[RMDB]
RNA sequence: GGGAACGACUCGAGUAGAGUCGAAAACUUCGGUGGUCCCGCCUCUCCUGUUCGGUGAACCCUCCCGGGUGUUUCCUCUUCCUAGGUCCGGAGUCGACCUCCAUCUGAUCCGUCCUGGCUCUCUUCGCCGGGGGAGCUCCCUCCCCAUCCUUGUCCUCAUGGAAUUUAACUUCGGUUAAAUUCCAUGAAAAGAAACAACAACAACAAC
Reactivity to 2A3 in 0.01 (KOAc 150mM, MgCl2 10mM, bicine 150mM(pH8.5), 24C), signal-to-noise 1, nucleotides 027 to 156: c100u230u200c100g010g030u040g000g090u010c000c040c000g010c000c020u050c020u090c010c050u130g080u180u190c070g040g060u090g100a140a110c010c000c030u100c020c050c060g000g000g090u050g010u040u090u030c000c020u040c040u140u010c010c030u040a080g030g010u030c070c030g100g010a030g040u080c020g070a130c030c000u010c020c010a080u080c070u080g060a050u010c010c050g050u070c020c030u020g070g000c040u000c000u000c020u130u090c050g020c050c040g010g000g000g010g000a020g030c020u080c020c000c000u020c020c000c000c000a070u130c010c000u010u070g000u080c000c000u000